The record gives the reactivity of an RNA of 177 nucleotides to 2A3 and DMS. Source: RMDB library M2PK50, as collected in RNAgym. Reactivities are given for positions 27 through 126. The DMS profile rests on 854 reads.
[RMDB]
RNA sequence: GGGAACGACUCGAGUAGAGUCGAAAACUAGGAUCGUUCGCGAUCCUAGAAAGGCGCGGCACCGUCCGCGGAACAAACGGCAAAACAAGAUAGUCAGCAUAAAAAUCAUCAGCUUCGGCUGAUGAAAGUUGACCUAUACGUUCGCGUAUAGGUCAACAAAAGAAACAACAACAACAAC
Reactivity to 2A3 in 0.01 (KOAc 150mM, MgCl2 10mM, bicine 150mM(pH8.5), 24C), signal-to-noise 2, nucleotides 027 to 126: c000u000a010g000g000a000u000c000g040u060u080c110g000c010g080a000u000c000c000u000a010g010a010a040a000g120g020c000g000c000g010g020c060a020c090c000g130u200c000c000g000c000g050g090a000a010c000a000a010a000c010g070g010c100a000a010a000a070c130a050a050g080a090u090a060g130u100c050a020g040c040a100u220a160a160a030a000a020u010c000a000u010c000a010g000c010u050u120c260g070g000c010u000g000a000u010g010a010a000a000
Reactivity to DMS in 0.01 (KOAc 150mM, MgCl2 10mM, bicine 150mM(pH8.5), 24C), signal-to-noise 1, nucleotides 027 to 126: c000u000a000g000g000a000u000c010g030u000u030c260g050c010g010a000u000c010c010u000a010g030a040a130a100g010g010c010g010c000g030g010c000a300c000c000g000u010c000c020g010c010g010g010a020a150c060a000a000a030c030g010g000c120a100a050a080a050c160a140a090g000a100u000a050g000u000c030a050g040c050a100u000a030a020a040a130a120u000c000a000u000c010a000g000c000u000u020c250g040g060c000u010g000a000u000g000a000a030a080